[RMDB]
RNA sequence: GGGAACGACUCGAGUAGAGUCGAAAACUCCACGCUGGGUAAUGGACGACGGCGGGGUGUGGCGAACAGGGAUACCGGUAGUCAGUGUCUGGAACAUCCCAAGGGGCGGCGGAGCUAGCACCCCGACAAAACGGGCACAAGUUCGCUUGUGCCCGAAGCAUAGUCAAGAGUUCGCUCUUGACUAUGCAAAAGAAACAACAACAACAAC
Reactivity to 2A3 in 0.01 (KOAc 150mM, MgCl2 10mM, bicine 150mM(pH8.5), 24C), signal-to-noise 2, nucleotides 027 to 156: c000u030c020c000a030c030g070c060u100g000g010g010u130a090a090u080g020g040a030c060g000a030c030g060g030c000g020g030g020g000u040g020u040g030g040c000g010a110a020c050a070g020g000g040a000u020a150c030c050g000g010u070a040g090u090c070a030g070u020g050u040c030u050g000g010a020a020c010a070u000c000c000c020a060a080g000g000g010g010c020g020g010c060g000g050a030g030c000u000a030g000c000a020c000c020c010c000g020a000c020a000a120a010a010c030g000g000g000c000a000c000a010a010g000u060u020c130g000c170u000u000g000u000g000c000c010c000g000a000a000